[RMDB]
RNA sequence: GGGAACGACUCGAGUAGAGUCGAAAACAGCGGGCGGACCUCUGGGCACAUCGGAUAUAUCAGUACAAAGCAUGAGCACCGAUAGCAAAAAUACCCAUGACGAUUCCGAUCAGGGCUCCUUGGACGGGUGUACCCUAAGUUUCGACUUAGGGUACACAAAAGAAACAACAACAACAAC
Reactivity to 2A3 in 0.01 (KOAc 150mM, MgCl2 10mM, bicine 150mM(pH8.5), 24C), signal-to-noise 1, nucleotides 027 to 126: c010a000g050c020g000g080g000c010g000g010a030c010c010u020c050u050g000g020g020c020a040c000a070u040c000g030g040a000u010a000u030a000u100c000a030g050u130a070c080a140a140a050g050c050a090u050g060a020g020c020a020c030c020g020a040u030a000g080c010a000a010a000a000a150u090a060c020c020c000a040u060g010a010c020g040a030u130u030c010c010g020a010u010c050a020g000g080g000c060u060c050c020u050u070g030g020a020c000g130g000
Reactivity to DMS in 0.01 (KOAc 150mM, MgCl2 10mM, bicine 150mM(pH8.5), 24C), signal-to-noise 2, nucleotides 027 to 126: c070a190g000c110g000g020g010c050g010g000a010c060c030u010c020u000g000g000g020c060a060c120a060u000c040g020g030a080u010a120u000a140u010c050a080g020u000a050c140a060a090a120g000c030a020u000g000a040g010c050a090c060c050g010a020u020a060g010c060a020a070a090a130a060u010a070c030c020c030a100u000g000a090c100g000a160u000u020c030c040g000a050u000c060a040g000g000g000c030u000c050c030u000u000g000g020a070c080g000g000